RNA sequence: GGGAACGACUCGAGUAGAGUCGAAAACACAAUUCUCUAAGCGAUGAGAAGCGUGUGGAAAAUUAGGGAUGGGCUACGGCUAUAAUCCUAAGAAAGCUUAUCUACAAGCGGAGGUAUUCUCAGAACGAAAACCAUUUGGCGUUCGCGCCAAAUGGAAGUUGUUACAAUCGUUCGCGAUUGUAACAACAAAAGAAACAACAACAACAAC
Reactivity to DMS in 0.01 (KOAc 150mM, MgCl2 10mM, bicine 150mM(pH8.5), 24C), signal-to-noise 1, nucleotides 027 to 156: c040a030c010a050a260u000u010c000u000c030u000a070a140g000c130g010a270u000g000a010g010a000a030g050c290g020u000g000u010g000g000a100a080a100a060u000u000a070g000g000g010a030u000g000g030g010c030u020a060c200g050g010c050u000a130u000a080a020u000c020c010u020a030a120g000a120a090a170g010c080u000u000a100u000c080u000a100c050a070a030g000c050g010g040a050g030g000u000a100u000u000c040u000c020a140g000a110a100c080g020a080a070a090a230c040c000a020u020u000u000g000g020c000g020u000u000c300g010c050g020c000c000a000a000a010u000g000g010a000a060
Reactivity to 2A3 in 0.01 (KOAc 150mM, MgCl2 10mM, bicine 150mM(pH8.5), 24C), signal-to-noise 3, nucleotides 027 to 156: c070a020c020a020a060u070u010c000u000c020u110a200a120g140c070g170a110u110g000a050g000a030a000g020c050g010u010g000u070g060g000a140a140a030a070u070u080a080g030g050g000a020u020g070g010g000c020u050a030c120g040g000c000u010a040u090a300a030u070c000c000u010a010a020g050a060a060a010g000c000u070u050a050u150c050u070a070c040a150a010g010c010g050g020a000g000g050u090a080u090u010c020u010c020a060g070a110a020c090g050a080a060a060a010c010c000a000u000u000u000g000g010c000g050u070u050c200g000c000g000c090c010a000a000a000u000g000g000a000a000
Chemical mapping of a 207-nucleotide RNA with DMS and 2A3. The RNA was probed in 150 mM KOAc, 10 mM MgCl2 and 150 mM bicine (pH 8.5) at 24 C.